Notes:
The data come from the RNA Mapping Database (RMDB), library OK3TST. This 207-nucleotide RNA was probed chemically with 2A3. 2A3 adducts were read by reverse transcription with SuperScript II with manganese. The reactions ran in a buffer of 150 mM KOAc, 10 mM MgCl2 and 150 mM bicine (pH 8.5), at 24 C. For 2A3, 833 sequencing reads were counted.
[RMDB]
RNA sequence: GGGAACGACUCGAGUAGAGUCGAAAACUGCAGGUCAACGGUACUUCUUCAGAUCAGCUAUUGCAGAAGACAGGUGAUCCAAGCGCUCUGGGCCAGUGCGACUGUAUAUAGGAGCUUGUCAUUUGAACCAGAAGCUAACUCUCUCCGAAACAAUGAGGUGAUCCGAAAAUUUCGAUUUUCGGAUCACAAAAGAAACAACAACAACAAC
Reactivity to 2A3 in 0.01 (KOAc 150mM, MgCl2 10mM, bicine 150mM(pH8.5), 24C), signal-to-noise 2, nucleotides 027 to 156: c020u020g010c010a020g030g000u040c010a020a070c050g090g000u050a070c090u040u050c010u030u070c010a020g000a130u020c050a010g070c010u130a070u250u060g000c030a040g010a100a000g020a050c040a010g120g000u020g070a080u000c020c040a090a020g000c020g020c040u020c020u020g030g090g000c000c050a010g020u030g020c030g070a160c060u010g020u090a040u020a050u090a200g010g030a000g020c010u030u040g020u000c020a070u160u050u140g040a060a040c040c000a030g000a080a020g000c000u030a000a100c000u010c000u010c000u000c040c020g060a070a130a050c040a030a160u090g010a020g080